[RMDB]
RNA sequence: GGGAACGACUCGAGUAGAGUCGAAAAAGGAGAUGGACACCCUCGUCGCCACCGCCCGCGACCUGGGCCGACCGGCCACCCCGCACUGCUACGGCGACGAAGGGGUGCGCCGCGCGGUCCGCGCCGACACUGAUGGUCCGUUCGCGGACCAUCAGUGAAAAGAAACAACAACAACAAC
Reactivity to DMS in 0.01 (KOAc 150mM, MgCl2 10mM, bicine 150mM(pH8.5), 24C), signal-to-noise 1, nucleotides 027 to 126: a050g000g020a050g040a170u030g010g010a090c100a160c070c000c010u010c050g000u000c060g000c020c000a110c170c150g000c050c150c020g040c000g000a060c000c080u000g030g010g010c000c020g040a130c170c060g010g040c000c030a100c030c080c010c010g000c210a110c140u000g000c060u010a020c210g000g000c020g180a030c180g000a100a060g000g010g020g020u000g010c170g020c020c000g020c180g020c030g010g030u000c020c050g020c160g050c150c000g010a150